Conditions: 150 mM KOAc, 10 mM MgCl2 and 150 mM bicine (pH 8.5), 24 C. This 170-nucleotide RNA was probed chemically with DMS and 2A3. The 2A3 profile rests on 783 reads.
RNA sequence: GGGAACGACUCGAGUAGAGUCGAAAAUGUGACAUCAAACAAAUGUUGUUCUGCAUGGAAGUUGUAAACAAGUACUUCGAAAUCUAUGACGGUGGUUGUCUUAAUGCUUCUGAAGUGGUUGUUAAUAUAAGAUUGCGGUUCGCCGCAAUCAAAAGAAACAACAACAACAAC
Reactivity to DMS in 0.01 (KOAc 150mM, MgCl2 10mM, bicine 150mM(pH8.5), 24C), signal-to-noise 2, nucleotides 027 to 129: u030g040u060g080a060c050a070u030c100a130a100a160c180a020a100a230u050g030u160u000g030u020u020c040u010g010c120a070u020g020g020a000a130g040u000u000g020u010a130a010a080c070a010a090g040u020a010c040u020u050c040g010a000a000a000u030c080u040a090u040g020a150c120g120g010u020g020g010u020u010g000u050c030u020u010a100a060u040g030c070u070u000c030u040g020a050a140g030u000g030g010u090u000g020u000u060a080a080u040a060u020a040a090
Reactivity to 2A3 in 0.01 (KOAc 150mM, MgCl2 10mM, bicine 150mM(pH8.5), 24C), signal-to-noise 1, nucleotides 027 to 129: u100g000u000g070a020c040a000u130c010a060a120a020c060a090a100a000u160g000u120u000g000u000u010c000u000g000c110a020u190g020g020a000a000g150u060u040g010u080a000a000a000c030a040a040g030u000a150c000u000u000c090g020a000a110a300u030c080u100a130u020g000a000c000g140g110u190g000g230u050u100g000u000c000u030u030a000a000u060g270c000u060u000c000u080g000a130a010g020u000g140g000u000u000g000u000u190a120a200u040a000u050a010a000